[RMDB]
RNA sequence: GGGAACGACUCGAGUAGAGUCGAAAAAGUCAGGAAUUCUGCCUCCUGGGGCAGAAACUUCCCGCAUAGCUGGUUGGAGGUCGCCGCCGUCUGAGUGCCGUGGAGGGAGAGAACGUGAUACCGUCAGUAUGUCUGUUAACUUCGGUUAACAGACAUAAAAAGAAACAACAACAACAAC
Reactivity to 2A3 in 0.01 (KOAc 150mM, MgCl2 10mM, bicine 150mM(pH8.5), 24C), signal-to-noise 1, nucleotides 027 to 126: a000g090u100c060a050g040g040a090a140u040u010c000u000g020c000c000u010c000c070u180g070g040g020g030c010a000g000a010a000a000c000u050u040c030c020c010g000c030a140u130a050g050c070u060g040g000u120u090g010g000a040g000g030u080c040g030c020c030g050c000c000g020u000c000u060g030a060g000u060g040c040c080g000u040g020g030a090g010g000g000a050g030a010g020a100a020c030g000u010g010a050u060a210c050c000g000u060c010a030g090
Reactivity to DMS in 0.01 (KOAc 150mM, MgCl2 10mM, bicine 150mM(pH8.5), 24C), signal-to-noise 3, nucleotides 027 to 126: a060g020u010c040a050g010g020a060a300u000u000c000u000g000c000c000u010c050c180u000g010g010g000g010c000a020g010a000a030a070c160u000u000c010c000c020g010c090a110u010a130g010c070u000g020g010u000u000g010g010a100g010g010u000c070g020c020c050g010c030c040g010u000c080u020g010a100g030u000g020c030c050g030u010g000g030a090g000g000g000a100g000a080g000a040a080c070g020u000g000a110u010a120c050c030g020u010c110a090g010
Source information: The data come from the RNA Mapping Database (RMDB), library OK2TST. The record gives the reactivity of an RNA of 177 nucleotides to 2A3 and DMS. The DMS profile rests on 3,139 reads. 2A3 adducts were read by reverse transcription with SuperScript II with manganese. Values cover nucleotides 27 to 126.